RNA sequence: GGGAACGACUCGAGUAGAGUCGAAAAACUGCGACAACGCAGGUUGAUAUCGAAGGCAUCUAUGCUGGCGAGUACCAGGCCCGCGUUAGGUGCAUUAGCGGCGGGAAUGUAGCGUCUCCGUGGUCUGCGUUGGCAACCGCCACACUGACCGGGAAAGACGCUACGUCCCAUUCGUGGGACGUAGCGUAAAAGAAACAACAACAACAAC
Reactivity to 2A3 in 0.01 (KOAc 150mM, MgCl2 10mM, bicine 150mM(pH8.5), 24C), signal-to-noise 2, nucleotides 027 to 156: a000c020u040g000c020g010a090c050a250a070c070g000c000a000g010g050u020u100g160a150u080a100u200c130g050a100a020g080g000c000a000u040c030u040a010u010g000c000u000g000g000c030g070a080g030u090a160c080c040a100g000g110c000c000c020g000c010g000u000u040a040g000g000u010g000c000a000u010u010a010g000c040g040g000c030g000g010g010a000a200u140g020u040a000g050c020g000u000c040u000c020c030g060u120g010g000u010c000u010g010c030g080u070u130g000g010c000a100a190c120c150g000c020c000a000c010a000c030u010g000a010c020c000g000g010g050a030a150a050g050
Reactivity to DMS in 0.01 (KOAc 150mM, MgCl2 10mM, bicine 150mM(pH8.5), 24C), signal-to-noise 2, nucleotides 027 to 156: a080c030u000g040c000g000a200c290a080a100c000g030c010a020g020g010u000u010g000a090u000a100u000c040g010a210a170g020g000c020a040u020c020u000a030u000g020c000u000g030g020c030g020a170g030u000a120c090c120a190g020g000c000c000c040g000c010g000u000u000a030g000g010u000g040c040a060u000u000a130g000c040g000g020c000g040g000g010a050a090u030g040u000a040g000c020g030u000c010u000c030c010g000u010g030g010u000c010u000g030c090g020u000u020g040g000c010a160a140c200c190g000c030c000a010c000a000c030u020g000a030c020c000g000g000g000a070a040a110g000